The record gives the reactivity of an RNA of 177 nucleotides to DMS and 2A3.
For 2A3 the reverse transcriptase was SuperScript II with manganese.
For DMS the reverse transcriptase was MarathonRT.
Reactivities are given for positions 27 through 126.

RNA sequence: GGGAACGACUCGAGUAGAGUCGAAAAAGGUAUUGUUCACCGUAUAGAUAUGGAUACUUCUGGUUUAUUAAUGGUUGCUAAAAAUGAUAUUGCUCAUCGUGGGCUUGUAGAACAAUUAAUGGAUAAAGUUAGUGUAUUCAUUCGUGAAUACACUAACAAAAGAAACAACAACAACAAC
Reactivity to DMS in 0.01 (KOAc 150mM, MgCl2 10mM, bicine 150mM(pH8.5), 24C), signal-to-noise 5, nucleotides 027 to 126: a050g000g010u000a030u000u000g010u010u000c060a080c040c020g010u010a110u010a100g000a100u000a100u010g010g010a080u010a050c080u010u000c060u000g010g010u000u000u000a040u000u000a040a050u000g000g010u000u000g000c040u000a010a050a070a110a080u010g010a080u000a080u010u000g010c040u000c020a120u010c170g020u000g010g000g010c020u000u000g020u000a050g000a050a050c040a040a040u000u000a040a060u010g000g010a050u010a050a080a130
Reactivity to 2A3 in 0.01 (KOAc 150mM, MgCl2 10mM, bicine 150mM(pH8.5), 24C), signal-to-noise 4, nucleotides 027 to 126: a000g100g000u080a040u030u100g020u050u070c030a040c080c010g000u050a090u120a120g100a020u080a030u220g070g010a030u030a120c000u050u000c030u050g080g010u040u050u080a070u010u040a050a020u030g040g010u040u030g080c030u070a100a070a020a040a040u130g080a060u070a060u170u150g000c010u000c020a090u100c090g090u150g000g010g010c000u000u020g040u050a030g010a030a000c000a000a020u060u070a030a030u070g020g030a050u080a140a080a050